Structure probing data (2A3) for a 207-nucleotide construct. The 2A3 profile rests on 592 reads. It was measured as part of the RMDB library M2RFPK. For 2A3 the reverse transcriptase was SuperScript II with manganese.
[RMDB]
RNA sequence: GGGAACGACUCGAGUAGAGUCGAAAAGCUCCUUGAGGUGAACGAUCUCGGUUGUUUCUCUGAAGGCAUGAUCACCCCGUCCGAUGCGGAAGUUCGUGCUUCCGUCGAACGCGAAAGUCGGACGGCGAAAACGAGUUACCGUUCGCGGUAACUCGAAUGUAGAUUGUGGGUUCGCCCACAAUCUACAAAAAGAAACAACAACAACAAC
Reactivity to 2A3 in 0.01 (KOAc 150mM, MgCl2 10mM, bicine 150mM(pH8.5), 24C), signal-to-noise 1, nucleotides 027 to 156: g000c000u000c000c000u030u040g040a010g020g070u050g020a050a050c020g000a010u000c030u010c030g090g050u000u000g010u000u000u000c050u010c050u050g120a120a010g030g020c080a120u160g000a020u190c080a030c010c000c000c000g020u040c000c000g000a000u040g010c000g000g010a000a000g000u110u300c150g100u300g060c000u020u000c000c020g010u000c000g050a230a040c090g000c020g160a160a060a000g040u010c000g010g000a000c000g000g000c020g020a050a050a000a000c000g000a000g000u000u000a000c030c000g060u060u040c210g030c000g040g000u000a000a000c000u020c000g000a000a000